[RMDB]
RNA sequence: GGGAACGACUCGAGUAGAGUCGAAAACUAAAUAAAUGUCCUGAACUGUGGUUGAUCCACUGGUCAGUGAACAGUGCAGUGAACCUGUAAGGCAAAGGGAAAGAACUAAGCAGCAGGCGGGGGAUUAGCUCAAAUGGUAGAGCGCUCGCUUAGCAUGAUAUGUCGGUAGAUUCGUCUACCGACAUAUAAAAGAAACAACAACAACAAC
Reactivity to 2A3 in 0.01 (KOAc 150mM, MgCl2 10mM, bicine 150mM(pH8.5), 24C), signal-to-noise 2, nucleotides 027 to 156: c010u030a030a040a190u150a020a120a070u170g000u040c000c000u000g010a060a020c000u010g010u010g070g010u150u220g140a110u160c010c000a010c040u020g040g010u020c020a020g000u020g110a010a010c000a020g040u040g080c000a010g000u010g130a090a080c010c030u020g030u080a060a120g040g000c060a030a050a040g000g010g010a040a090a100g030a030a020c020u060a120a000g020c000a000g020c000a000g080g000c020g010g000g020g000g030a060u170u180a010g020c020u000c030a050a120a080u140g070g020u100a050g010a010g010c020g040c020u020c000g020c000u060u020a030g010c030a010u110g000
Reactivity to DMS in 0.01 (KOAc 150mM, MgCl2 10mM, bicine 150mM(pH8.5), 24C), signal-to-noise 1, nucleotides 027 to 156: c030u000a050a120a120u000a070a040a050u020g000u000c000c000u010g000a010a020c020u010g000u000g000g050u000u000g030a160u000c020c000a010c040u010g010g010u020c020a040g020u000g010a050a050c080a080g030u000g000c030a070g020u010g010a070a070c050c030u000g020u000a070a120g040g020c090a080a110a120g000g020g000a110a080a040g010a110a040c030u010a020a100g000c030a080g050c050a020g000g000c040g050g000g020g040g000a100u010u020a100g040c000u000c020a060a040a090u000g010g000u000a070g010a090g010c080g000c060u000c060g040c010u010u000a040g000c040a140u000g010